RNA sequence: GGGAACGACUCGAGUAGAGUCGAAAAGAAAAGGGUCCACAGUUGGGGAGACAUUAAUGUGGAGAUCCUUGCUGAAACAAUGAGAGUGGGUGCAAUUGUUACUGAAACACCAGGGAUUCAGCCUAGGCACACUCUCCGUUUUCGAACGGAGAGUGUGAAAAGAAACAACAACAACAAC
Reactivity to 2A3 in 0.01 (KOAc 150mM, MgCl2 10mM, bicine 150mM(pH8.5), 24C), signal-to-noise 1, nucleotides 027 to 126: g010a000a170a010a000g000g010g000u000c000c000a010c010a050g070u150u060g020g090g010g060a050g040a020c010a030u090u210a180a070u150g000u020g000g000a030g010a040u050c000c030u000u060g020c040u010g000a040a020a050c020a060a080u170g010a050g030a010g140u090g030g010g000u050g040c000a030a100u060u090g010u140u110a090c050u140g050a080a100a040c040a050c010c010a000g060g010g010a000u060u060c010a020g040c000c030u060a040g060g000
Reactivity to DMS in 0.01 (KOAc 150mM, MgCl2 10mM, bicine 150mM(pH8.5), 24C), signal-to-noise 2, nucleotides 027 to 126: g000a060a070a030a050g010g000g010u000c000c030a030c060a050g010u000u010g010g020g000g010a140g010a050c090a080u000u010a090a140u000g000u000g010g000a100g000a070u010c000c020u010u010g000c060u010g000a110a070a060c090a050a070u010g010a080g010a070g010u010g000g010g010u010g000c030a080a050u000u010g010u000u000a110c100u010g000a080a060a110c120a050c100c050a100g020g030g010a120u000u000c060a100g000c030c030u020a060g010g000
Conditions: 150 mM KOAc, 10 mM MgCl2 and 150 mM bicine (pH 8.5), 24 C. An RNA of 177 nucleotides, treated with 2A3 and DMS and read out base by base. The data come from the RNA Mapping Database (RMDB), library OK2TRN. DMS adducts were read by reverse transcription with MarathonRT.